Annotation: Chemical mapping of a 207-nucleotide RNA with 2A3 and DMS. 2A3 adducts were read by reverse transcription with SuperScript II with manganese. Conditions: 150 mM KOAc, 10 mM MgCl2 and 150 mM bicine (pH 8.5), 24 C. The DMS profile rests on 1,361 reads. The data come from the RNA Mapping Database (RMDB), library RNAMAK. 2A3 is a SHAPE reagent: it acylates the 2'-hydroxyl of flexible nucleotides of all four kinds.
RNA sequence: GGGAACGACUCGAGUAGAGUCGAAAAUGUACAGUUCGCUGUACAAUGGAAGGGGUCUAGUUGAGAGAGGGACAUGCUCUGAAGCCUCCACGGAGCAACAGCCUCCCCACCUCUAACUAGACGGAGGCACCCACAUUAAUAAGAUUCGUCUUAUUAAGUAGCUACAACAAUUCGUUGUUGUAGCUACAAAAGAAACAACAACAACAAC
Reactivity to 2A3 in 0.01 (KOAc 150mM, MgCl2 10mM, bicine 150mM(pH8.5), 24C), signal-to-noise 3, nucleotides 027 to 156: u040g000u000a000c000a020g030u030u110c110g060c150u010g000u030a030c090a040a090u140g060g060a100a110g150g020g000g010u000c000u000a010g010u000u170g190a050g010a040g040a260g080g020g020a030c030a050u070g000c000u000c000u000g020a070a010g020c000c000u010c000c000a000c010g000g010a000g050c020a070a140c070a090g080c000c120u070c010c000c000c030a200c060c000u010c000u000a000a000c000u000a000g000a000c000g000g000a000g000g000c000a050c000c000c000a060c000a030u040u050a000a000u000a000a000g000a020u050u080c150g050u000c120u010u000a000u020u040a080a090
Reactivity to DMS in 0.01 (KOAc 150mM, MgCl2 10mM, bicine 150mM(pH8.5), 24C), signal-to-noise 1, nucleotides 027 to 156: u020g000u000a020c000a010g020u000u050c300g010c020u030g000u000a000c000a060a120u000g020g030a200a080g030g020g000g000u010c000u000a050g020u010u020g010a060g030a100g000a060g090g060g010a110c040a300u010g000c020u010c000u000g000a070a140g040c000c010u010c010c050a300c050g070g000a000g000c010a000a070c110a150g060c050c030u000c030c010c030c140a110c120c000u000c010u010a020a090c020u010a010g020a040c000g110g010a010g040g020c020a130c020c040c000a060c060a270u000u000a000a010u020a030a030g000a090u000u010c300g060u020c020u000u000a030u000u010a000a110